An RNA of 177 nucleotides, treated with DMS and 2A3 and read out base by base. The RNA was probed in 150 mM KOAc, 10 mM MgCl2 and 150 mM bicine (pH 8.5) at 24 C. The 2A3 profile rests on 26,035 reads. The DMS profile rests on 37,824 reads. The data come from the RNA Mapping Database (RMDB), library OK1LIB.
[RMDB]
RNA sequence: GGGAACGACUCGAGUAGAGUCGAAAACUCUUUCACGGUUAAGUCUGUCUCUGGCAGAGCAGACUGUCAGGAGGACGAGGUCACCAUCUUCACGAAGCCAAAGCCAAAUUCCGCCUUGUCCUGUAAAACGAUAAUAUGAGUUCGCUCAUAUUAUCGUAAAAGAAACAACAACAACAAC
Reactivity to DMS in 0.01 (KOAc 150mM, MgCl2 10mM, bicine 150mM(pH8.5), 24C), signal-to-noise 9, nucleotides 027 to 126: c040u000c020u010u010u010c080a090c110g000g010u010u020a070a040g010u000c000u000g000u050c010u000c000u010g010g010c150a150g010a040g000c030a020g000a050c000u000g000u010c070a110g000g000a100g010g000a040c040g000a040g000g010u010c080a100c070c040a060u010c020u020u010c070a090c080g000a090a090g000c040c050a070a090a130g000c060c070a050a080a130u020u010c040c060g010c020c000u000u000g000u000c000c010u010g000u020a040a050a080
Reactivity to 2A3 in 0.01 (KOAc 150mM, MgCl2 10mM, bicine 150mM(pH8.5), 24C), signal-to-noise 9, nucleotides 027 to 126: c010u010c000u030u150u090c110a090c080g060g000u080u170a070a010g010u010c010u030g160u060c010u010c010u080g170g000c100a020g000a020g010c010a010g000a030c000u000g010u000c030a060g020g140a020g010g010a010c010g010a010g000g020u050c030a040c070c010a080u040c030u120u090c050a060c100g070a050a010g030c020c020a110a030a020g010c020c000a030a090a110u100u020c020c010g000c010c000u010u030g020u000c000c000u030g070u110a070a100a020